[RMDB]
RNA sequence: GGGAACGACUCGAGUAGAGUCGAAAAGCCUCCACGUCCUCUGGUACGCGCACUCGUUUUGGAGGUCGCGCGGACUGCGCUACGAGGACCGCGAGGAGGAUCUGCGCCUCACUCUGGACGCCUACUUUGAUAGCGUGGCCGUGGAGUACGAACUGGCCAUAUUAGAGUUUUUCGAAACUCUAAUAUGAAAAGAAACAACAACAACAAC
Reactivity to DMS in 0.01 (KOAc 150mM, MgCl2 10mM, bicine 150mM(pH8.5), 24C), signal-to-noise 3, nucleotides 027 to 156: g000c060c000u000c010c030a040c020g000u000c010c000u010c060u010g040g020u000a030c010g030c020g040c030a100c020u000c010g020u000u000u000u010g050g020a050g000g000u010c070g180c000g000c020g020g010a020c020u010g010c060g020c030u000a060c030g000a050g010g000a070c040c040g020c150g000a180g010g000a040g020g010a080u010c050u010g030c140g030c000c010u000c040a180c050u000c040u000g030g010a090c070g010c000c030u000a050c040u000u000u010g020a170u000a040g010c010g060u000g010g040c000c050g020u000g000g010a060g010u000a070c050g020a110a110c070u000g010g050c080
Reactivity to 2A3 in 0.01 (KOAc 150mM, MgCl2 10mM, bicine 150mM(pH8.5), 24C), signal-to-noise 5, nucleotides 027 to 156: g040c000c000u000c010c000a010c000g010u020c000c010u140c110u090g020g010u090a020c010g000c000g000c000a020c020u010c020g210u140u090u190u300g190g010a050g010g080u150c100g000c010g000c000g000g010a020c010u060g000c010g000c010u020a010c020g010a020g020g010a030c000c010g030c070g020a020g000g000a010g000g000a040u080c070u180g070c100g050c050c000u020c000a220c030u020c020u040g040g020a040c050g040c010c010u060a100c060u100u120u190g120a230u120a020g010c030g040u060g010g000c000c000g000u020g000g000a010g020u050a040c070g030a060a030c040u060g020g000c000

This 207-nucleotide RNA was probed chemically with DMS and 2A3. It was measured as part of the RMDB library OK3TST. For DMS, 7,677 sequencing reads were counted. For 2A3 the reverse transcriptase was SuperScript II with manganese. For 2A3, 3,985 sequencing reads were counted.